[RMDB]
RNA sequence: GGGAACGACUCGAGUAGAGUCGAAAACAUUGGUUCGUGACCCAGCGCAACUUCUACGAGCCGCAGAUUAUCACCACGGACAACACCUUCGUCUCCGGGAACUGCGACGUGGUCAUAGGCAUUGUGACGUGUGGAUCAAUUUCGAUUGAUCCACACGAAAAGAAACAACAACAACAAC
Reactivity to 2A3 in 0.01 (KOAc 150mM, MgCl2 10mM, bicine 150mM(pH8.5), 24C), signal-to-noise 2, nucleotides 027 to 126: c020a040u020u100g110g040u150u050c050g020u030g050a080c000c000c010a030g000c030g000c020a030a040c040u080u030c010u080a070c050g020a030g000c020c010g000c000a020g030a220u050u160a070u250c050a010c120c020a070c060g060g000a010c030a070a040c030a100c030c020u120u120c050g060u020c040u000c020c010g040g000g080a060a010c010u030g070c030g040a060c010g070u100g000g000u000c020a030u050a050g060g000c020a030u000u090g060u040g080a040
Reactivity to DMS in 0.01 (KOAc 150mM, MgCl2 10mM, bicine 150mM(pH8.5), 24C), signal-to-noise 3, nucleotides 027 to 126: c060a080u010u010g030g030u000u010c080g030u000g010a070c010c030c020a190g000c040g010c050a050a080c160u000u000c040u000a130c140g010a080g010c070c010g020c130a040g000a110u000u000a070u000c130a100c090c090a110c130g010g010a060c090a050a070c090a080c080c040u000u000c070g010u000c010u000c050c050g000g000g010a030a050c100u000g010c010g000a080c050g040u000g010g010u000c040a030u000a090g000g010c010a050u000u000g020u000g000a170
An RNA of 177 nucleotides, treated with 2A3 and DMS and read out base by base. Values cover nucleotides 27 to 126. The 2A3 profile rests on 2,379 reads. The RNA was probed in 150 mM KOAc, 10 mM MgCl2 and 150 mM bicine (pH 8.5) at 24 C.